[RMDB]
RNA sequence: GGGAACGACUCGAGUAGAGUCGAAAAGAUAUGGACGGAUGGAGGCUAUAAUCUCGGAAACGAGGUAGCCUUCCAUUCCGUCCUAAGUCAAAAGAUCCGUCAUCUUGUUCGCAAGAUGACGGAUCAAGACAAUAAACGUGUUCGCACGUUUAUUGUCAAAAGAAACAACAACAACAAC
Reactivity to 2A3 in 0.01 (KOAc 150mM, MgCl2 10mM, bicine 150mM(pH8.5), 24C), signal-to-noise 5, nucleotides 027 to 126: g020a010u060a040u130g000g000a000c010g010g010a000u010g010g000a000g010g000c020u010a030u040a300a300u170c000u010c010g010g030a070a060a040c010g000a000g020g000u000a000g000c000c000u030u000c000c000a000u010u000c000c000g010u010c000c000u000a000a000g000u000c000a020a030a010a080g000a000u000c000c000g030u000c000a000u000c000u040u040g040u130u120c300g030c190a010a000g000a000u000g000a000c000g000g000a000u000c000a000a000
Reactivity to DMS in 0.01 (KOAc 150mM, MgCl2 10mM, bicine 150mM(pH8.5), 24C), signal-to-noise 7, nucleotides 027 to 126: g010a040u000a300u000g010g000a010c010g000g000a030u000g000g010a040g000g010c000u000a030u010a280a120u020c000u000c000g020g010a100a090a220c000g000a010g010g010u000a010g010c000c000u000u010c010c010a010u010u010c000c000g010u000c000c000u010a000a080g010u000c040a090a070a120a110g000a010u000c000c000g000u000c000a010u000c000u000u000g000u000u010c190g020c010a020a010g000a000u000g010a000c000g000g000a000u000c000a030a060